This 177-nucleotide RNA was probed chemically with DMS and 2A3.
RNA sequence: GGGAACGACUCGAGUAGAGUCGAAAAGAUAUGGACGAUGACUAGGGAGAGUGCGGUCGGAAACGACCGGCACUCUUUGAUCUAGGUCGUCCUAAGUCAAAAGUAGAGCUGGUUCGCCAGCUCUACACUGACUUAUAGGGUUCGCCCUAUAAGUCAGAAAAGAAACAACAACAACAAC
Reactivity to DMS in 0.01 (KOAc 150mM, MgCl2 10mM, bicine 150mM(pH8.5), 24C), signal-to-noise 4, nucleotides 027 to 126: g010a040u000a300u000g010g010a040c000g010a020u020g010a290c020u000a010g000g010g020a010g000a020g020u010g030c000g010g010u000c000g010g010a100a090a200c000g010a010c000c000g030g030c000a010c000u000c000u010u000u010g010a080u020c000u010a020g020g010u000c000g000u010c000c000u010a020a090g000u000c020a100a100a150a120g010u000a010g000a010g000c000u000g000g000u000u020c300g010c000c000a010g010c010u000c000u000a000c000a090
Reactivity to 2A3 in 0.01 (KOAc 150mM, MgCl2 10mM, bicine 150mM(pH8.5), 24C), signal-to-noise 1, nucleotides 027 to 126: g010a010u030a030u100g000g010a000c000g030a010u110g090a170c010u010a010g080g000g040a090g020a020g010u000g020c000g000g000u020c010g030g010a060a050a020c000g040a000c000c000g040g060c000a000c000u010c020u000u030u020g010a000u010c000u000a010g060g000u020c010g000u000c010c000u010a070a020g030u000c010a000a000a110a180g000u000a000g000a000g020c020u000g070g040u100u250c300g150c110c000a010g000c030u010c000u000a000c010a000
Conditions: 150 mM KOAc, 10 mM MgCl2 and 150 mM bicine (pH 8.5), 24 C. For DMS, 6,638 sequencing reads were counted. It was measured as part of the RMDB library TTRDES.